[RMDB]
RNA sequence: GGGAACGACUCGAGUAGAGUCGAAAAACGCGGAGCAGACGGUGACUGGAAGCAGACGGCCUUGCGUCAUGUAUACGUACGCUCGAAACUCCUUGGCGAAGCGCUGUGAUUUGCGGUCGUAGACACCAAUGUGCUUGCAGACGAAAUCUAUCUCCGUAUGUGGUGAGGGAUUCGUCCCUCACCACAUAAAAGAAACAACAACAACAAC
Reactivity to 2A3 in 0.01 (KOAc 150mM, MgCl2 10mM, bicine 150mM(pH8.5), 24C), signal-to-noise 1, nucleotides 027 to 156: a000c060g000c000g030g030a000g020c080a030g000a040c010g140g000u130g140a100c000u010g020g060a030a000g050c030a070g080a100c020g000g000c000c060u110u300g100c040g000u000c030a110u060g080u040a180u020a160c040g080u010a010c000g080c150u170c040g080a050a060a080c070u090c020c040u030u060g000g030c020g000a030a000g000c030g020c060u010g000u080g100a180u000u010u300g120c010g050g020u030c000g000u030a040g060a080c060a010c090c100a030a140u120g000u020g060c010u020u120g000c010a010g030a060c100g030a150a000a000u000c030u000a060u090c010u060c030c000g030u030

The record gives the reactivity of an RNA of 207 nucleotides to 2A3. Conditions: 150 mM KOAc, 10 mM MgCl2 and 150 mM bicine (pH 8.5), 24 C. Values cover nucleotides 27 to 156. The data come from the RNA Mapping Database (RMDB), library OK3TST.